[RMDB]
RNA sequence: GGGAACGACUCGAGUAGAGUCGAAAAAGCAGGAGUACGCUCCUGCAUGGGUAGACGGAUUGACCCCAACUGAAGUUCAAUUCUAACGUUAAAAGGAGUUUUAUAUGACUGGACGUACGCGUCCAGAUGACGAUUUCAUUCUUCGGAAUGAAAUCAAGUAAGGAUAUACGUUCGCGUAUAUCCUUACAAAAGAAACAACAACAACAAC
Reactivity to DMS in 0.01 (KOAc 150mM, MgCl2 10mM, bicine 150mM(pH8.5), 24C), signal-to-noise 2, nucleotides 027 to 156: a100g020c020a010g010g000a040g010u000a090c300g050c030u000c000c000u000g000c010a050u000g000g000g020u000a120g030a140c100g010g020a100u000u000g010a070c030c040c010c040a050a300c140u010g000a000a070g020u000u000c030a020a060u000u000c040u000a050a150c050g030u000u000a130a060a060a150g000g000a150g020u000u000u000u000a130u000a090u020g010a160c010u010g010g010a040c000g030u000a130c230g040c040g020u020c000c000a000g010a050u000g010a140c120g010a010u000u000u000c000a010u000u000c000u000u020c300g020g000a040a000u020g000a020a010a000u000c010a050a130
Reactivity to 2A3 in 0.01 (KOAc 150mM, MgCl2 10mM, bicine 150mM(pH8.5), 24C), signal-to-noise 4, nucleotides 027 to 156: a010g010c000a000g010g020a020g000u050a040c160g030c090u000c000c000u010g000c000a000u000g000g000g020u150a130g060a150c060g000g010a000u010u010g000a010c000c000c020c010a090a040c140u260g020a010a020g020u060u010c000a010a010u010u000c020u130a110a080c100g090u130u200a040a060a040a060g160g030a100g050u030u050u110u090a200u070a080u160g110a060c000u000g010g000a000c010g000u060a020c220g010c000g140u010c000c000a000g000a020u040g050a010c090g000a000u000u000u000c000a000u000u000c000u040u040c110g080g010a000a000u000g000a000a000a000u000c000a000a000